The record gives the reactivity of an RNA of 177 nucleotides to 2A3 and DMS. Values cover nucleotides 27 to 126. 2A3 adducts were read by reverse transcription with SuperScript II with manganese. The 2A3 profile rests on 6,436 reads.
RNA sequence: GGGAACGACUCGAGUAGAGUCGAAAAAAAGAGGUCAGUGCAAAAACGACGAUCAAUCCGGACAAUAUGCCUUUCCGGUUUUAAUGGCAUAAAUUUCGAGAAUGCAGUACGGUUUAAACAAGAGGAACAUCCUAGGUAAUUUCGAUUACCUAGGAUGAAAAGAAACAACAACAACAAC
Reactivity to 2A3 in 0.01 (KOAc 150mM, MgCl2 10mM, bicine 150mM(pH8.5), 24C), signal-to-noise 6, nucleotides 027 to 126: a000a000a000g090a010g010g010u070c070a050g020u050g130c030a040a040a070a120a040c030g060a020c030g010a010u060c040a020a050u040c030c000g000g020a010c030a070a120u060a020u120g020c000c000u040u060u040c050c010g030g000u050u050u050u130a030a020u050g010g010c000a000u020a030a130a060u090u100u040c110g020a100g030a170a070u080g010c020a020g030u090a060c050g060g040u050u070u160a040a100a030c050a050a050g030a070g080g020a060a040
Reactivity to DMS in 0.01 (KOAc 150mM, MgCl2 10mM, bicine 150mM(pH8.5), 24C), signal-to-noise 7, nucleotides 027 to 126: a040a030a030g000a060g020g010u010c030a060g020u000g020c090a050a050a050a090a040c070g010a040c090g010a110u030c050a050a090u010c040c000g000g000a050c170a100a100u010a010u000g000c020c010u000u010u000c030c020g010g000u010u010u010u000a060a060u020g000g000c010a000u000a020a050a170u010u010u000c030g010a100g020a050a080u000g010c110a040g010u010a040c060g000g010u020u020u020a050a040a050c120a060a080g000a100g000g010a070a140
The data come from the RNA Mapping Database (RMDB), library OK1LIB. For DMS, 18,496 sequencing reads were counted. Conditions: 150 mM KOAc, 10 mM MgCl2 and 150 mM bicine (pH 8.5), 24 C.